Chemical mapping of a 177-nucleotide RNA with 2A3 and DMS. The 2A3 profile rests on 4,343 reads. High DMS reactivity at an A or C suggests that its Watson-Crick edge is free. The RNA was probed in 150 mM KOAc, 10 mM MgCl2 and 150 mM bicine (pH 8.5) at 24 C.
RNA sequence: GGGAACGACUCGAGUAGAGUCGAAAAAAUGCAGUUAUUAUGACACUUGAUUUAUUGAAGGACAUUAAAUUUGUUAUACCUGCUCUACAGCAUGCAUUUAUGAAACAUAAGGGCGGUGAUUCAACUGCCAUGACUAUAACUUCGGUUAUAGUCAUGGAAAAGAAACAACAACAACAAC
Reactivity to 2A3 in 0.01 (KOAc 150mM, MgCl2 10mM, bicine 150mM(pH8.5), 24C), signal-to-noise 5, nucleotides 027 to 126: a000a000u120g000c010a000g020u060u060a090u090u050a050u090g020a010c010a030c070u080u100g030a040u100u050u120a070u040u120g070a130a040g110g020a030c020a020u030u060a020a050a060u070u070u070g020u020u020a040u030a060c000c010u040g020c000u000c020u070a060c040a020g020c010a040u040g000c010a010u030u070u130a110u140g090a100a100a010c030a030u080a050a040g010g010g000c020g010g040u030g020a050u100u080c020a020a030c010u020g010
Reactivity to DMS in 0.01 (KOAc 150mM, MgCl2 10mM, bicine 150mM(pH8.5), 24C), signal-to-noise 7, nucleotides 027 to 126: a050a050u000g010c010a040g000u010u010a080u010u000a040u010g000a040c040a070c300u010u000g010a050u000u010u000a050u020u000g010a140a080g000g010a090c030a020u000u000a020a040a050u000u010u010g010u010u010a070u000a050c190c040u000g020c020u000c050u000a070c180a070g010c060a050u000g010c090a050u000u000u010a060u020g000a100a050a100c090a060u020a060a070g000g000g000c030g010g020u000g010a130u010u000c080a030a050c080u000g010